[RMDB]
RNA sequence: GGGAACGACUCGAGUAGAGUCGAAAACAUGGGGAGGCGCUCUUUAUCAACUUUUUGCAGACCAUCGCGCGAGCACCGGCCAAUUGGUCGAUGCCCUACUACCUAGAGGAAGAGGUGAAGGUUUUGCUGUGUAGAAUGGGUUCGCCCAUUCUACACAAAAAGAAACAACAACAACAAC
Reactivity to DMS in 0.01 (KOAc 150mM, MgCl2 10mM, bicine 150mM(pH8.5), 24C), signal-to-noise 1, nucleotides 027 to 126: c140a080u010g000g000g030g020a060g000g000c010g030c020u000c040u010u020u000a120u030c150a140a070c100u000u010u000u010u010g000c100a080g010a090c000c030a020u000c080g000c040g040c050g000a030g020c010a020c020c030g060g000c010c010a240a190u000u010g040g020u000c000g000a020u000g020c010c040c030u010a040c110u000a100c060c050u000a090g030a130g000g010a060a080g000a080g030g000u010g010a030a060g010g010u010u000u010u010g000c100
Reactivity to 2A3 in 0.01 (KOAc 150mM, MgCl2 10mM, bicine 150mM(pH8.5), 24C), signal-to-noise 1, nucleotides 027 to 126: c040a060u140g000g000g000g000a020g000g040c000g020c030u010c000u040u150u050a160u070c050a050a180c070u130u050u030u220u300g030c070a000g020a050c010c010a030u060c030g070c000g000c030g090a020g050c000a010c010c010g010g040c040c010a120a300u180u220g000g000u000c000g000a000u050g020c000c030c000u050a070c030u060a040c000c010u000a070g010a040g140g020a090a000g030a050g120g050u030g050a050a000g100g050u030u060u100u180g030c000
Chemical mapping of a 177-nucleotide RNA with DMS and 2A3.
For DMS, 1,136 sequencing reads were counted.
The reactions ran in a buffer of 150 mM KOAc, 10 mM MgCl2 and 150 mM bicine (pH 8.5), at 24 C.
The data come from the RNA Mapping Database (RMDB), library OK2TST.
The 2A3 profile rests on 727 reads.
2A3 adducts were read by reverse transcription with SuperScript II with manganese.
For DMS the reverse transcriptase was MarathonRT.
Values cover nucleotides 27 to 126.